The record gives the reactivity of an RNA of 177 nucleotides to 2A3 and DMS.
For DMS, 1,926 sequencing reads were counted.
It was measured as part of the RMDB library OK2TRN.
DMS adducts were read by reverse transcription with MarathonRT.
For 2A3, 2,013 sequencing reads were counted.
For 2A3 the reverse transcriptase was SuperScript II with manganese.
[RMDB]
RNA sequence: GGGAACGACUCGAGUAGAGUCGAAAAAUCCGCUAGGAUCGCUCAUGCACUAGCAUGUCUAGCGAUCUGAUCAUCGCUCUAGCUAGUGCUAUAGCGUGAUCGCACUGUCAUGCGGAUCGAUGCGUACCUAGGAACGCUCAUUCGUGAGCGUUCCUAGAAAAGAAACAACAACAACAAC
Reactivity to 2A3 in 0.01 (KOAc 150mM, MgCl2 10mM, bicine 150mM(pH8.5), 24C), signal-to-noise 2, nucleotides 027 to 126: a000u000c000c000g010c050u050a020g000g080a020u020c010g010c000u020c000a000u030g000c020a050c210u090a060g000c000a020u040g060u030c220u100a000g000c010g010a000u020c020u010g010a030u070c020a020u120c030g010c000u000c000u010a030g000c010u060a100g090u090g130c060u030a020u030a010g010c000g060u010g000a000u000c030g050c030a070c180u130g100u290c050a080u100g000c000g060g000a020u020c040g080a050u140g040c050g060u090a090c010
Reactivity to DMS in 0.01 (KOAc 150mM, MgCl2 10mM, bicine 150mM(pH8.5), 24C), signal-to-noise 2, nucleotides 027 to 126: a030u000c000c000g040c000u000a180g000g000a070u010c010g030c010u000c030a060u000g020c010a140c250u000a100g010c000a130u010g030u020c210u000a050g010c000g020a000u010c030u000g000a060u000c090a010u010c040g010c000u010c060u020a130g000c000u020a080g010u000g030c000u020a040u000a020g000c030g040u000g000a040u000c040g000c170a090c200u000g000u040c080a070u010g040c020g000g000a020u000c080g000a080u000g000c100g010u000a100c130